RNA sequence: GGGAACGACUCGAGUAGAGUCGAAAAGCCACGAUCUGCAGUCAUGUCAGAGCAGGAGCUCGAACUCCUUAUGGCCGAAGUUGAAAAAGAGAACAAGGCCGGAAAUCCUGUCAACUUCAAUGCAAGAGGACUACAGUAUGUUCGCAUACUGUAGUCCAAAAGAAACAACAACAACAAC
Reactivity to DMS in 0.01 (KOAc 150mM, MgCl2 10mM, bicine 150mM(pH8.5), 24C), signal-to-noise 3, nucleotides 027 to 126: g020c010c030a130c140g020a180u000c020u020g020c040a070g010u000c120a090u000g010u000c020a070g020a070g040c210a080g000g000a080g020c030u000c170g010a150a190c050u000c000c000u000u010a100u000g000g010c020c190g020a080a060g010u010u010g000a030a060a090a130a100g000a170g010a090a070c060a060a150g000g000c030c050g000g000a050a090a080u010c030c020u010g000u000c040a060a050c060u000u000c040a120a090u010g000c090a100a120g000a180
Reactivity to 2A3 in 0.01 (KOAc 150mM, MgCl2 10mM, bicine 150mM(pH8.5), 24C), signal-to-noise 2, nucleotides 027 to 126: g090c020c020a020c070g040a100u010c010u000g010c010a040g030u080c020a080u110g040u050c010a020g010a010g020c010a010g000g060a030g010c020u070c190g100a140a100c010u060c000c000u030u060a110u180g030g000c030c000g020a050a020g000u010u040g160a030a060a020a070a020g120a000g010a040a000c020a000a120g040g000c000c040g000g060a000a020a000u030c000c010u000g020u040c030a010a020c000u080u020c060a090a050u090g000c020a050a040g040a080
Notes
Chemical mapping of a 177-nucleotide RNA with DMS and 2A3. As a SHAPE reagent, 2A3 marks flexible, mostly unpaired nucleotides at the ribose 2'-OH.